[RMDB]
RNA sequence: GGGAACGACUCGAGUAGAGUCGAAAAGUGCCGGCAAUACAGUGUGUAUGGAGGUCUCAAUGGCUCGGAAGUGCCAGCAAACCGGCGUAGAUAUUAGCAGACGUAUGGGCGUAAGACUUUUAUUGUAAAAAGUACAUAAGCUUCGGCUUAUGUACAACCUAAUACCUCUGUUCGCAGAGGUAUUAGGAAAAGAAACAACAACAACAAC
Reactivity to 2A3 in 0.01 (KOAc 150mM, MgCl2 10mM, bicine 150mM(pH8.5), 24C), signal-to-noise 3, nucleotides 027 to 156: g070u030g040c030c000g060g000c040a000a060u040a080c020a040g070u010g000u040g020u220a080u070g040g010a040g010g080u010c050u020c100a010a200u070g000g000c030u020c060g010g030a060a070g040u010g150c000c020a020g030c070a070a040a040c020c000g030g000c000g040u050a020g040a060u080a040u160u100a030g030c030a000g000a050c030g050u050a090u150g050g040g000c040g030u020a040a020g040a010c000u020u060u070u210a090u100u040g030u040a050a110a010a030a010g000u000a000c000a000u000a000a000g020c020u000u030c140g030g000c000u000u020a000u010g000u000a000c000a000a000
Reactivity to DMS in 0.01 (KOAc 150mM, MgCl2 10mM, bicine 150mM(pH8.5), 24C), signal-to-noise 2, nucleotides 027 to 156: g020u010g000c010c020g030g030c020a070a100u000a080c050a140g000u010g000u010g000u000a040u020g000g000a070g030g000u000c010u010c020a060a120u010g000g020c010u010c000g000g010a130a160g020u000g010c010c010a090g000c040a050a110a070c030c010g010g020c070g020u000a060g010a110u000a040u000u000a050g020c060a110g020a090c070g000u000a060u000g010g010g000c010g020u000a070a090g000a070c020u000u000u000u000a040u030u000g000u020a010a050a080a070a160g010u000a010c010a020u000a000a020g010c010u000u010c300g040g010c000u000u000a000u000g000u000a020c000a050a070